[RMDB]
RNA sequence: GGGAACGACUCGAGUAGAGUCGAAAAAAAAAGCACGCGAAGCACGCGAAGCACGCGAAGCACGCGAAGCACGCGAAGCACGCGAAGCACGCGAAGCUCGCGAAGCACGCGAAGCACGCGAAAAAAAGUUAAUCACUAAGUUCGCUUAGUGAUUAACAAAAGAAACAACAACAACAAC
Reactivity to DMS in 0.01 (KOAc 150mM, MgCl2 10mM, bicine 150mM(pH8.5), 24C), signal-to-noise 2, nucleotides 027 to 126: a020a020a090a060a090g030c080a150c070g010c030g010a100a110g020c020a260c010g040c000g010a080a180g000c030a270c020g000c010g000a070a050g010c020a280c000g000c000g000a070a070g020c000a220c030g020c000g000a070a120g010c230a130c020g000c050g000a080a130g030c020a230c000g000c010g000a080a080g000c000u000c020g040c010g000a010a070g010c010a190c050g010c000g030a070a160g040c000a130c020g010c000g000a000a000a090a030a070a030a190
Reactivity to 2A3 in 0.01 (KOAc 150mM, MgCl2 10mM, bicine 150mM(pH8.5), 24C), signal-to-noise 3, nucleotides 027 to 126: a000a000a000a000a000g130c060a040c030g010c010g040a060a010g000c010a010c030g000c010g040a060a010g020c010a000c010g000c000g040a070a020g000c020a000c040g010c010g010a050a010g040c000a010c020g020c000g050a080a010g160c140a020c050g000c000g060a050a020g020c020a010c020g010c000g030a040a020g000c010u000c000g000c010g030a050a000g020c020a010c010g020c010g030a050a010g000c000a000c000g000c000g130a120a020a010a000a000a000a010